[RMDB]
RNA sequence: GGGAACGACUCGAGUAGAGUCGAAAAUUGAAUGGUGUUGGGUCAUUGAGCUUUUUCCAUGUGGAGGAGGAUUUUCAAAUGAGUGAUACAAUCACGAACAUUACAGAUUUUUCAAUGAGUGAUAAUGGUUCUGUAUAUCUUUCGAGAUAUACAGAACAAAAGAAACAACAACAACAAC
Reactivity to 2A3 in 0.01 (KOAc 150mM, MgCl2 10mM, bicine 150mM(pH8.5), 24C), signal-to-noise 3, nucleotides 027 to 126: u060u060g070a030a050u060g000g030u050g040u110u060g070g020g030u030c020a040u020u070g020a030g020c040u070u020u040u070u000c040c030a090u170g090u250g060g030a040g010g010a030g020g030a040u050u040u070u070c030a030a050a060u090g030a060g080u020g010a010u030a140c120a120a070u040c000a010c020g040a090a020c040a020u040u060a040c010a030g160a170u000u070u010u050u150c040a050a050u110g030a030g120u060g070a070u040a140a080u100g040
Reactivity to DMS in 0.01 (KOAc 150mM, MgCl2 10mM, bicine 150mM(pH8.5), 24C), signal-to-noise 6, nucleotides 027 to 126: u010u000g000a090a100u010g010g010u000g000u010u000g020g010g010u000c050a060u000u000g010a070g000c050u010u000u000u000u000c020c030a170u000g020u010g010g000a080g000g010a070g010g000a060u000u000u000u010c060a040a070a070u000g010a110g010u000g000a060u010a080c210a090a110u010c020a030c030g010a070a090c070a020u000u010a070c130a140g000a090u000u000u010u000u010c070a040a070u010g000a120g020u000g000a060u010a050a120u010g010
Chemical mapping of a 177-nucleotide RNA with 2A3 and DMS. The reactions ran in a buffer of 150 mM KOAc, 10 mM MgCl2 and 150 mM bicine (pH 8.5), at 24 C. The DMS profile rests on 8,007 reads.